[RMDB]
The data come from the RNA Mapping Database (RMDB), library OK2TRN.
Structure probing data (2A3 and DMS) for a 177-nucleotide construct.
DMS adducts were read by reverse transcription with MarathonRT.
Values cover nucleotides 27 to 126.
For 2A3, 3,563 sequencing reads were counted.
RNA sequence: GGGAACGACUCGAGUAGAGUCGAAAACUCGGGGGACUGGGCUGACCGCGGGGUCGGGGCCAGGUUCUCACACCAUCCAGAUAAUGUAUGGCUGCGACGUGGGGUCGGACGGGCGCUUCCUCCGCGGAACAAGACAAGGAUUCGUCCUUGUCUUGUUAAAAGAAACAACAACAACAAC
Reactivity to 2A3 in 0.01 (KOAc 150mM, MgCl2 10mM, bicine 150mM(pH8.5), 24C), signal-to-noise 2, nucleotides 027 to 126: c010u000c010g010g010g000g010g000a020c040u070g010g120g060c000u020g030a040c010c010g050c050g080g060g000g040u050c020g010g000g010g020c000c000a000g040g000u060u040c060u020c010a030c000a010c000c010a030u110c040c000a020g040a150u160a210a090u220g090u140a030u080g080g000c040u100g040c080g070a110c080g090u050g010g030g010g000u050c040g010g020a030c040g020g040g030c120g010c060u030u010c000c000u030c000c010g000c000g030g000
Reactivity to DMS in 0.01 (KOAc 150mM, MgCl2 10mM, bicine 150mM(pH8.5), 24C), signal-to-noise 4, nucleotides 027 to 126: c030u000c010g020g000g010g020g020a160c110u000g000g000g020c090u010g000a110c030c010g020c090g010g000g000g020u000c080g000g000g010g000c010c020a050g000g000u000u010c040u010c060a060c080a090c080c040a050u000c040c030a070g000a150u010a120a130u020g020u000a090u000g000g000c070u000g020c090g020a050c090g000u010g000g010g010g010u000c070g010g010a080c060g010g000g010c060g000c100u000u000c030c010u000c020c020g020c080g000g000